[RMDB]
This 207-nucleotide RNA was probed chemically with 2A3. Reactivities are given for positions 27 through 156. For 2A3, 440 sequencing reads were counted. It was measured as part of the RMDB library OK3TST. Conditions: 150 mM KOAc, 10 mM MgCl2 and 150 mM bicine (pH 8.5), 24 C.
RNA sequence: GGGAACGACUCGAGUAGAGUCGAAAAAACCUGGGGAUGAGACUACCUCGACAUACGUGUGCGCUAUCAAAGUGGAAAGAUGCUGUUGUGCUGUGUUUGCAGAUUGGCCAGAAUCAUGGUAUCAAGAAGUAUUCUCCAGAUGAAUGGGUGUCACAUAGAACGCGUAAACAUUCGUGUUUACGCGUUCAAAAGAAACAACAACAACAAC
Reactivity to 2A3 in 0.01 (KOAc 150mM, MgCl2 10mM, bicine 150mM(pH8.5), 24C), signal-to-noise 1, nucleotides 027 to 156: a000a010c030c000u030g000g000g000g000a000u070g010a030g060a080c020u150a170c170c000u050c040g060a020c070a110u120a000c080g000u080g040u060g010c000g010c000u030a070u190c000a030a180a020g000u070g000g030a190a000a000g040a030u030g000c000u070g050u080u000g020u030g030c130u000g000u000g030u010u000u140g010c020a080g110a250u080u150g050g070c010c000a080g010a040a060u070c060a070u030g060g000u070a000u200c020a010a050g020a100a000g100u050a100u110u000c010u000c020c000a030g040a100u080g000a020a020u040g060g000g040u070g020u070c000a000c000a070u080a010